[RMDB]
RNA sequence: GGGAACGACUCGAGUAGAGUCGAAAAUCAAUGCCUUGGCAGUCGGUUUGGCGUUUUUGUUCGUAGCGAUGAUGCUUUUCAUCUGACGCGACGUGAAGACCAAACGCAGUUAAGAACCGUAGAUGACGCUAAAGGCCUACUUCGGUAGGCCUUUAGCAAAAGAAACAACAACAACAAC
Reactivity to DMS in 0.01 (KOAc 150mM, MgCl2 10mM, bicine 150mM(pH8.5), 24C), signal-to-noise 1, nucleotides 027 to 126: u000c060a130a100u030g010c090c010u000u040g030g020c000a100g030u020c030g040g010u030u000u000g010g040c000g000u010u000u000u000u000g000u000u010c000g050u000a030g010c300g020a080u010g010a000u020g010c300u040u010u040u030c000a000u000c020u000g000a260c090g000c000g010a030c030g030u000g030a050a120g000a120c040c140a010a000a060c020g010c050a100g000u020u000a090a080g000a050a080c060c080g010u000a040g010a100u000g010a130c140
An RNA of 177 nucleotides, treated with DMS and read out base by base.